[RMDB]
RNA sequence: GGGAACGACUCGAGUAGAGUCGAAAAAGCCAUACCAUUACGAUGGUAUGGCAAGUCCGUGACGGCGAUGGAUCCCGCCUGGCCGAUGCCGAACUGCCGAUCUGGCUGAUGGUUCCUGCCCCCUCAAAAAACGUAAAGCACUUCGGUGCUUUACGAAUCAGUUGUUUGUGUUCGCACAAACAACUGAAAAAGAAACAACAACAACAAC
Reactivity to 2A3 in 0.01 (KOAc 150mM, MgCl2 10mM, bicine 150mM(pH8.5), 24C), signal-to-noise 1, nucleotides 027 to 156: a010g000c000c000a000u000a000c000c000a000u040u040a070c240g090a010u000g010g020u000a000u000g000g020c010a000a000g010u000c010c020g040u060g120a070c060g000g000c050g040a040u050g010g000a030u030c040c000c030g000c000c060u040g040g000c050c080g080a040u170g030c020c000g070a040a030c050u080g000c000c000g140a180u160c090u200g010g020c010u050g000a040u050g020g070u050u000c010c000u010g010c000c000c000c000c000u040c030a010a020a010a040a050a050c020g000u000a030a000a020g020c000a000c000u000u080c190g080g000u000g000c000u000u000u000a000c000g000a000a000
Source information: The record gives the reactivity of an RNA of 207 nucleotides to 2A3. Values cover nucleotides 27 to 156. 2A3 adducts were read by reverse transcription with SuperScript II with manganese. The reactions ran in a buffer of 150 mM KOAc, 10 mM MgCl2 and 150 mM bicine (pH 8.5), at 24 C.